[RMDB]
RNA sequence: GGGAACGACUCGAGUAGAGUCGAAAAUAUCGACCCCGUUGCUAUUGAAUACCCGUGUAUGGCGUUGCUGACACGGACGAGCACUGCCAUGUCGGGCGGUGUUUCAAGUCCUAGCGUGGGCUAGAAAAGUCUCAGGUCCUUUCGAGGAUCUGGGGCUAAAAGAAACAACAACAACAAC
Reactivity to 2A3 in 0.01 (KOAc 150mM, MgCl2 10mM, bicine 150mM(pH8.5), 24C), signal-to-noise 3, nucleotides 027 to 126: u100a020u020c020g030a010c000c000c000c000g010u010u040g000c010u020a020u070u090g020a040a020u040a110c000c000c000g000u010g000u030a280u090g030g000c060g110u060u230g000c000u010g000a010c000a010c030g010g020a010c050g010a000g000c000a000c010u010g000c000c000a080u140g120u210c100g030g010g000c000g000g000u000g000u020u130u030c020a040a010g020u000c010c000u010a000g000c010g030u150g000g000g000c000u000a000g020a010a090a000
Reactivity to DMS in 0.01 (KOAc 150mM, MgCl2 10mM, bicine 150mM(pH8.5), 24C), signal-to-noise 4, nucleotides 027 to 126: u020a090u010c080g000a120c230c000c000c010g020u010u020g000c030u000a060u010u020g000a080a080u030a090c090c000c000g000u000g010u000a060u020g000g000c020g010u030u020g000c000u000g000a040c000a020c060g000g020a040c140g000a120g000c000a010c000u000g000c000c000a180u050g010u050c200g010g000g010c000g010g000u000g000u000u000u000c020a070a110g000u020c220c180u000a160g000c100g010u100g000g000g000c000u000a220g000a140a270a300

Structure probing data (2A3 and DMS) for a 177-nucleotide construct. For 2A3 the reverse transcriptase was SuperScript II with manganese. The RNA was probed in 150 mM KOAc, 10 mM MgCl2 and 150 mM bicine (pH 8.5) at 24 C. For DMS the reverse transcriptase was MarathonRT.